Chemical mapping of a 207-nucleotide RNA with 2A3. For 2A3 the reverse transcriptase was SuperScript II with manganese. The reactions ran in a buffer of 150 mM KOAc, 10 mM MgCl2 and 150 mM bicine (pH 8.5), at 24 C. It was measured as part of the RMDB library M2RFPK.

[RMDB]
RNA sequence: GGGAACGACUCGAGUAGAGUCGAAAAACGGUCGUACGCGACCGAGGCGCGGCUAGGUCGUCGGACCGAACAAUGGCAUCCCGCAUUCUGCCAUCCGCCGCGCAGCUUCUUCUCAAACGGUGCGGAAAAAAGUAGGACACCUUCGGGUGUCCUACAACUACUCCUUAGGCUUCGGCCUAAGGAGUAGAAAAGAAACAACAACAACAAC
Reactivity to 2A3 in 0.01 (KOAc 150mM, MgCl2 10mM, bicine 150mM(pH8.5), 24C), signal-to-noise 1, nucleotides 027 to 156: a000c000g000g000u010c010g020u040a040c230g000c010g180a000c010c000g000a010g000g000c010g000c010g000g010c000u000a000g000g000u010c040g160u100c230g270g020a000c000c000g000a000a010c000a010a010u000g000g020c000a010u100c050c000c000g010c000a010u300u090c000u040g000c000c000a020u020c020c030g000c000c000g010c000g000c000a000g010c000u100u080c000u070u020c000u010c020a120a100a030c040g040g010u000g010c010g160g000a030a000a120a000a000a000g000u000a000g000g000a000c000a000c000c020u040u050c170g060g000g000u000g010u000c000c000u000a000c000a000a000